[RMDB]
RNA sequence: GGGAACGACUCGAGUAGAGUCGAAAAGUUGAUCUGCUGGUUGUGGGUGACGCCGAGGUCCACGUUCGCCUCGCGGAACAGCGCGGCGGCGUCCUGAAAGCGGCGGUAAUUGAGCGCGAAGUCAGGGAGUUGUGAUCUACUUCGGUAGAUCACAACUAAAAGAAACAACAACAACAAC
Reactivity to 2A3 in 0.01 (KOAc 150mM, MgCl2 10mM, bicine 150mM(pH8.5), 24C), signal-to-noise 1, nucleotides 027 to 126: g010u010u050g030a090u030c040u050g000c040u090g080g050u110u090g060u090g000g050g030u110g060a020c020g000c000c000g030a040g010g000u000c000c080a040c060g080u300u300c010g080c010c010u000c020g000c020g020g020a120a160c060a020g020c010g000c000g010g030c000g000g010c020g000u000c000c040u070g030a080a030a000g090c040g080g000c000g030g010u070a200a240u100u120g050a020g040c060g000c030g070a030a010g000u030c020a000g030g050g030
Reactivity to DMS in 0.01 (KOAc 150mM, MgCl2 10mM, bicine 150mM(pH8.5), 24C), signal-to-noise 2, nucleotides 027 to 126: g030u000u010g000a110u000c050u000g010c060u000g010g020u010u000g010u010g010g020g040u000g020a080c050g000c020c030g000a100g010g020u010c050c170a060c020g020u000u010c060g000c010c000u010c010g020c030g010g030a090a080c190a190g010c010g020c110g000g010c030g000g000c010g000u000c040c040u000g000a040a090a110g030c050g000g040c030g020g000u000a040a140u000u010g000a070g010c060g000c040g000a090a170g010u000c040a070g010g020g000
About this RNA: This 177-nucleotide RNA was probed chemically with 2A3 and DMS. The RNA was probed in 150 mM KOAc, 10 mM MgCl2 and 150 mM bicine (pH 8.5) at 24 C. Values cover nucleotides 27 to 126. The DMS profile rests on 2,513 reads. The data come from the RNA Mapping Database (RMDB), library OK2TRN.